This 207-nucleotide RNA was probed chemically with DMS and 2A3. The reactions ran in a buffer of 150 mM KOAc, 10 mM MgCl2 and 150 mM bicine (pH 8.5), at 24 C. For DMS the reverse transcriptase was MarathonRT. Values cover nucleotides 27 to 156. The data come from the RNA Mapping Database (RMDB), library OK3TST.
RNA sequence: GGGAACGACUCGAGUAGAGUCGAAAACGUACGUGGAGACACGUACGACGAGACUUCGGUCUCGAAUCGGCGGGAGAAAAGGCCGCCUCGUGUAAGGAGUCGGUUGUCGGCGAGCCAACGGACUCAAGAGCUUACACGAACUAUUGAGCCUUUUCGAGCCUAAGUUGUAAUUCGUUACAACUUAGGCAAAAGAAACAACAACAACAAC
Reactivity to DMS in 0.01 (KOAc 150mM, MgCl2 10mM, bicine 150mM(pH8.5), 24C), signal-to-noise 4, nucleotides 027 to 156: c020g000u000a000c000g060u010g000g000a300g010a300c010a000c010g020u000a020c000g050a110c040g010a200g010a020c020u010u000c210g040g000u000c000u000c020g000a030a050u000c020g050g020c020g010g060g000a180g010a030a010a020a010g000g030c010c010g020c090c030u010c010g040u000g000u000a040a070g010g010a050g010u010c040g020g030u000u000g010u000c030g010g020c150g010a290g010c190c040a040a050c040g010g010a020c010u000c010a110a090g020a190g010c010u000u010a040c050a050c050g010a020a020c090u010a130u000u010g000a130g000c010c000u000u000u000u000c010g010a300
Reactivity to 2A3 in 0.01 (KOAc 150mM, MgCl2 10mM, bicine 150mM(pH8.5), 24C), signal-to-noise 4, nucleotides 027 to 156: c010g000u000a000c000g000u000g010g010a040g010a040c000a000c000g010u000a000c000g020a000c000g010a000g000a000c010u090u120c260g100g010u000c010u000c000g000a050a110u090c070g010g000c030g020g030g000a180g010a040a000a000a000g000g000c000c000g000c010c030u010c010g000u000g000u000a000a000g040g010a000g010u010c110g070g000u070u000g010u030c040g000g130c230g020a020g000c000c010a000a000c020g090g000a000c000u000c010a030a040g120a040g160c010u000u000a000c010a000c000g000a020a000c020u030a070u110u220g070a030g010c000c000u000u000u000u000c010g010a020